RNA sequence: GGGAACGACUCGAGUAGAGUCGAAAAAGUGAGGCUCGCCAAUCCAUAUGACUAGGAUUAUGCUGAGUGAUACCCCCUUUCGAACGUACGGACGUCCAGCUGAGAUCUCCUAGAUAACAUGACACCCAACACCUUGGAGGUUCGCCUCCAAGGUGUUAAAAGAAACAACAACAACAAC
Reactivity to 2A3 in 0.01 (KOAc 150mM, MgCl2 10mM, bicine 150mM(pH8.5), 24C), signal-to-noise 4, nucleotides 027 to 126: a000g150u130g020a040g000g070c020u020c020g040c000c020a020a020u000c020c030a080u080a040u280g200a130c060u110a090g030g000a020u050u030a020u200g040c110u130g010a010g020u020g030a030u120a160c000c000c010c000c020u070u070u040c100g030a130a070c030g020u160a010c050g010g030a000c010g020u020c020c000a020g020c030u030g030a040g000a210u010c020u010c000c000u050a090g040a150u100a030a030c060a090u070g020a010c000a010c010c010c010
Reactivity to DMS in 0.01 (KOAc 150mM, MgCl2 10mM, bicine 150mM(pH8.5), 24C), signal-to-noise 2, nucleotides 027 to 126: a020g110u000g070a110g110g000c010u000c030g000c000c050a050a040u000c070c060a140u040a130u060g060a220c110u010a040g000g000a020u000u030a060u000g030c000u040g000a020g010u030g010a180u030a150c050c060c000c010c010u010u000u000c050g000a080a090c080g010u040a070c090g000g000a030c050g000u030c020c080a030g020c030u000g010a090g000a000u030c050u020c000c000u020a050g000a120u020a020a100c140a110u030g000a110c050a200c040c010c000

This 177-nucleotide RNA was probed chemically with 2A3 and DMS.